RNA sequence: GGGAACGACUCGAGUAGAGUCGAAAAAUCCCUAGCCGGUCGAAGGGGCCGCUGGGGUUAAAACUCGCAAGUUCCGGUGACAGAUCGGGGAAAAAAUCUCGGGAGCAUCGAAUUGUUUUCAGGCCCUCUCAGUAUGUCUGUUCGCAGACAUACUGAGAAAAGAAACAACAACAACAAC
Reactivity to 2A3 in 0.01 (KOAc 150mM, MgCl2 10mM, bicine 150mM(pH8.5), 24C), signal-to-noise 1, nucleotides 027 to 126: a000u020c000c000c000u000a000g090c100c090g010g030u050c020g080a250a110g300g060g000g000c000c000g000c030u020g000g000g010g010u010u020a000a000a020a020c020u060c080g000c020a000a090g040u110u000c050c000g010g030u070g020a040c010a050g080a030u070c010g000g020g000g020a060a080a070a000a070a080u020c020u020c010g010g000g010a020g010c000a040u000c020g030a100a030u040u010g000u030u090u060u130c070a020g000g050c000c000c000u050